[RMDB]
RNA sequence: GGGAACGACUCGAGUAGAGUCGAAAAUCACGCAUCACCGAGGAGGAAAUCGCGGACAAUUCCUUUGCACUGCUCGAAGAUCACAUCGACCGCCACGCACAGAAGAUGGCUGAGAAGCUUGACGCCGAAGCAUUCGAAGUCCUGAACGCGGCGGCGAGUUCUAAGUCACCUUCGGGUGACUUAGAACAAAAGAAACAACAACAACAAC
Reactivity to 2A3 in 0.01 (KOAc 150mM, MgCl2 10mM, bicine 150mM(pH8.5), 24C), signal-to-noise 1, nucleotides 027 to 156: u080c010a010c020g000c020a070u120c000a050c070c020g020a040g000g040a010g000g100a090a100a040u110c100g000c000g060g070a010c020a040a060u060u100c020c000u080u020u110g100c070a050c040u050g000c020u050c040g040a140a030g030a140u100c050a040c000a140u070c040g250a300c030c000g000c000c000a050c070g050c000a020c010a050g050a110a000g120a080u300g020g000c000u010g000a010g010a020a000g000c000u060u030g070a120c100g050c030c040g040a000a000g000c060a190u010u000c000g030a000a000g020u040c000c000u070g000a030a010c030g000c000g000g030c000g000g000c000g000a010
This 207-nucleotide RNA was probed chemically with 2A3. It was measured as part of the RMDB library OK3TST. For 2A3, 705 sequencing reads were counted. Reactivities are given for positions 27 through 156. For 2A3 the reverse transcriptase was SuperScript II with manganese. The reactions ran in a buffer of 150 mM KOAc, 10 mM MgCl2 and 150 mM bicine (pH 8.5), at 24 C.